Conditions: 150 mM KOAc, 10 mM MgCl2 and 150 mM bicine (pH 8.5), 24 C. Structure probing data (DMS and 2A3) for a 207-nucleotide construct. DMS adducts were read by reverse transcription with MarathonRT. For DMS, 3,112 sequencing reads were counted.

[RMDB]
RNA sequence: GGGAACGACUCGAGUAGAGUCGAAAAUUAGAAAAAAUUAACGGGAUUGUAGAAUGGUGGUUAAACCUACCCGCAGACUAUAACGGUCUUAAUGACCUUAUGCACAAAAGGCAAAUACUUUCGGCGCACCUUUACGGAUUGGCUACCGAUUUAUCGACCUUGAUAGAAAAUUCGUUUUCUAUCAAGGAAAAGAAACAACAACAACAAC
Reactivity to DMS in 0.01 (KOAc 150mM, MgCl2 10mM, bicine 150mM(pH8.5), 24C), signal-to-noise 2, nucleotides 027 to 156: u010u000a200g020a020a040a030a150a090a140u020u000a030a110c090g040g020g020a080u000u000g020u000a100g020a060a080u000g030g030u000g010g010u010u020a070a100a090c070c020u000a070c030c000c020g010c030a080g020a090c050u010a070u000a070a040c070g030g020u000c010u010u000a060a140u000g000a040c010c000u000u000a020u000g040c070a140c070a040a040a040a040g030g020c000a080a050a060u000a050c020u000u000u000c040g010g020c090g020c030a030c040c040u000u000u000a070c070g010g030a040u000u000g000g010c050u000a020c010c020g020a150u000u000u010a090u020c020g010a300
Reactivity to 2A3 in 0.01 (KOAc 150mM, MgCl2 10mM, bicine 150mM(pH8.5), 24C), signal-to-noise 3, nucleotides 027 to 156: u070u030a050g080a070a100a020a020a010a020u140u150a100a040c050g000g010g010a050u100u120g020u060a050g050a140a050u060g050g030u020g020g070u080u180a070a120a040c000c010u040a010c020c000c020g020c030a020g020a050c030u030a050u070a260a020c080g000g000u020c010u050u190a200a120u240g000a010c000c000u060u020a050u140g030c060a030c020a100a060a010a020g020g000c010a010a050a070u090a090c030u050u060u080c040g030g000c020g000c040a030c030c000u030u100u210a050c040g000g040a080u050u070g070g000c000u030a060c000c000g050a020u070u030u080a110u110c020g010a030